Record summary:
The data come from the RNA Mapping Database (RMDB), library OK2TST. The record gives the reactivity of an RNA of 177 nucleotides to DMS and 2A3. For 2A3 the reverse transcriptase was SuperScript II with manganese. DMS adducts were read by reverse transcription with MarathonRT. The DMS profile rests on 1,003 reads. Conditions: 150 mM KOAc, 10 mM MgCl2 and 150 mM bicine (pH 8.5), 24 C.

RNA sequence: GGGAACGACUCGAGUAGAGUCGAAAAUGGCCAACAUGAGGAAAGCACGUCUUUACUAAAAAUACAAAAAUUAGCUGGGCCUGGUGGCUCAUGCCUGUAAUCCCAGCUACUUGGGAGUCUGAGGCGACGUCCUGCUACUAUUCGUAGUAGCAGGACGAAAAGAAACAACAACAACAAC
Reactivity to DMS in 0.01 (KOAc 150mM, MgCl2 10mM, bicine 150mM(pH8.5), 24C), signal-to-noise 1, nucleotides 027 to 126: u010g020g040c020c010a030a080c000a140u000g010a110g010g000a020a060a100g000c020a050c140g010u000c030u010u010u040a040c030u000a010a080a050a080a050u040a050c070a040a060a050a060a040u000u000a050g010c040u000g000g000g000c210c050u000g030g010u010g000g000c030u000c040a020u010g010c030c020u010g010u010a070a150u020c000c000c010a000g010c050u000a030c060u000u000g000g000g030a050g000u000c060u000g000a060g000g040c030g000a210
Reactivity to 2A3 in 0.01 (KOAc 150mM, MgCl2 10mM, bicine 150mM(pH8.5), 24C), signal-to-noise 1, nucleotides 027 to 126: u010g070g020c010c010a000a020c050a040u170g030a050g100g050a060a020a020g040c080a040c130g020u000c020u070u040u060a040c050u120a040a050a070a130a070u130a050c050a000a100a020a000a110u080u050a040g000c020u020g000g000g020c040c030u050g070g090u090g000g090c040u050c220a050u130g000c000c000u070g060u170a060a080u000c000c000c000a010g020c010u050a100c030u060u060g000g010g000a020g040u000c020u040g060a020g000g050c010g020a020